The record gives the reactivity of an RNA of 177 nucleotides to DMS and 2A3.
Reactivities are given for positions 27 through 126.
The RNA was probed in 150 mM KOAc, 10 mM MgCl2 and 150 mM bicine (pH 8.5) at 24 C.
[RMDB]
RNA sequence: GGGAACGACUCGAGUAGAGUCGAAAAAGAACCUCGCAAUGAGGUAAGGUGGGACUUUUCCUUCGGGAACCAAGCGGUUGGUUCCGAGGGGGGUGUGAUCCAGGUACCGCCGUAGAAACUGGAUUACCCAUCAUAACAACUUCGGUUGUUAUGAUGGAAAAGAAACAACAACAACAAC
Reactivity to DMS in 0.01 (KOAc 150mM, MgCl2 10mM, bicine 150mM(pH8.5), 24C), signal-to-noise 3, nucleotides 027 to 126: a080g000a100a050c010c000u010c020g070c220a140a090u010g010a000g030g010u000a030a070g020g010u020g010g010g010a170c090u010u000u010u000c000c020u010u000c030g000g020g000a020a020c000c000a010a090g010c160g000g010u010u000g000g010u000u000c000c000g000a020g010g000g000g010g000g010u010g020u010g010a010u000c010c010a010g020g020u010a090c020c010g030c020c050g020u010a080g010a020a100a130c000u000g000g000a020u000u000a020c030
Reactivity to 2A3 in 0.01 (KOAc 150mM, MgCl2 10mM, bicine 150mM(pH8.5), 24C), signal-to-noise 2, nucleotides 027 to 126: a020g050a000a040c000c000u000c000g080c140a230a270u280g010a020g010g000u000a030a010g100g000u110g000g020g060a040c020u090u120u090u030c010c000u030u010c060g100g000g060a040a050c000c010a000a020g100c040g020g180u040u030g000g000u010u010c010c000g000a020g010g000g010g000g010g000u020g030u030g020a010u000c010c000a000g030g000u030a050c000c030g030c010c000g030u040a020g100a030a250a010c010u020g020g000a000u020u020a020c000